[RMDB]
RNA sequence: GGGAACGACUCGAGUAGAGUCGAAAAGAUAUGGACUCCUGAAUAGGGAGCUCCCGCUCGGAAACGAGCGUGAGAGCGACGAUCUAUGGGAGUCCUAAGUCAAAAGAGAUUGCUUCGGCAAUCUCAACAUGUUGAUGUUGUUCGCAACAUCAACAUGAAAAGAAACAACAACAACAAC
Reactivity to 2A3 in 0.01 (KOAc 150mM, MgCl2 10mM, bicine 150mM(pH8.5), 24C), signal-to-noise 3, nucleotides 027 to 126: g010a000u010a000u020g000g000a000c000u020c010c010u070g060a130a270u300a300g020g000g000a000g000c000u000c020c000c010g000c010u010c000g000g010a000a010a000c000g000a000g000c010g000u090g050a300g000a000g030c000g300a300c010g000a010u000c000u020a170u300g050g000g010a000g000u000c000c000u000a000a000g000u010c010a000a000a120a200g010a000g000a010u020u020g000c000u040u100c290g100g000c010a000a010u000c000u000c000a000a010
Reactivity to DMS in 0.01 (KOAc 150mM, MgCl2 10mM, bicine 150mM(pH8.5), 24C), signal-to-noise 3, nucleotides 027 to 126: g000a000u000a040u010g000g010a030c000u000c000c000u010g010a130a120u010a020g010g000g000a020g010c000u000c000c020c010g000c000u000c000g020g000a020a010a050c000g030a010g020c010g010u010g010a150g010a010g000c000g020a100c300g000a030u010c010u010a070u010g020g010g010a020g010u000c010c000u000a000a050g010u000c010a120a080a140a160g000a020g000a020u000u000g010c000u000u020c270g030g010c000a000a010u000c000u000c000a050a180
Chemical mapping of a 177-nucleotide RNA with 2A3 and DMS. The 2A3 profile rests on 6,816 reads. Reactivities are given for positions 27 through 126. Source: RMDB library TTRDES, as collected in RNAgym. DMS adducts were read by reverse transcription with MarathonRT.